[RMDB]
An RNA of 177 nucleotides, treated with DMS and read out base by base. The reactions ran in a buffer of 150 mM KOAc, 10 mM MgCl2 and 150 mM bicine (pH 8.5), at 24 C. For DMS the reverse transcriptase was MarathonRT. Source: RMDB library TTRINS, as collected in RNAgym.
RNA sequence: GGGAACGACUCGAGUAGAGUCGAAAAGAUAUGGAAGACAGGUUAGGGAGUUGUUGAGUGCGUUUGACGAUUUCGGAAACGAAAUCCGAGCACUCGACAACGAAGAACUAACCUGUCUUCCUAAGUCCCUAUCGUUAUAGUUCGCUAUAACGAUAGGAAAAGAAACAACAACAACAAC
Reactivity to DMS in 0.01 (KOAc 150mM, MgCl2 10mM, bicine 150mM(pH8.5), 24C), signal-to-noise 6, nucleotides 027 to 126: g000a110u010a290u010g010g000a020a000g000a000c000a000g000g010u010u000a010g000g020g010a110g020u000u000g000u000u000g010a020g030u010g020c000g010u010u010u020g010a230c300g000a020u000u000u000c000g000g000a140a120a270c000g010a020a000a000u010c000c010g000a130g000c000a000c000u000c000g000a000c000a010a000c000g010a050a110g000a120a150c000u010a000a010c000c000u000g000u000c000u000u000c000c000u000a010a080g000u000c060